Annotation:
Structure probing data (2A3) for a 207-nucleotide construct. High 2A3 reactivity points to a flexible backbone, as in loops and unpaired stretches. 2A3 adducts were read by reverse transcription with SuperScript II with manganese. The RNA was probed in 150 mM KOAc, 10 mM MgCl2 and 150 mM bicine (pH 8.5) at 24 C.

RNA sequence: GGGAACGACUCGAGUAGAGUCGAAAACCAUCGACUGUCACCAGAUGCUGCAUCACCUGAUCACUGAUGGCUCAACGGUAUCCGGCGGUACAAAUGAAUACUUGUAGCUGCCUUUUGAGCGGGUUGGAAAAUCGGAGGUUGUUCGCAACCUCCGAAACAUUUGCCCUUACUUCGGUAAGGGCAAAUGAAAAGAAACAACAACAACAAC
Reactivity to 2A3 in 0.01 (KOAc 150mM, MgCl2 10mM, bicine 150mM(pH8.5), 24C), signal-to-noise 1, nucleotides 027 to 156: c000c000a030u100c080g100a010c080u080g030u100c040a030c060c020a050g010a050u060g030c030u000g000c030a040u010c020a050c000c030u030g030a060u020c030a020c030u040g010a030u030g060g000c000u030c040a080a070c080g050g000u030a050u070c030c060g000g000c010g030g000u020a020c000a000a040a000u180g090a080a100u160a240c120u040u050g010u060a060g120c010u020g000c060c000u050u050u040u120g040a010g010c090g000g060g010u050u040g010g040a110a040a030a030u030c000g030g000a000g010g000u010u000g020u030u030c110g020c120a000a000c000c000u000c000c000g000a000a000a000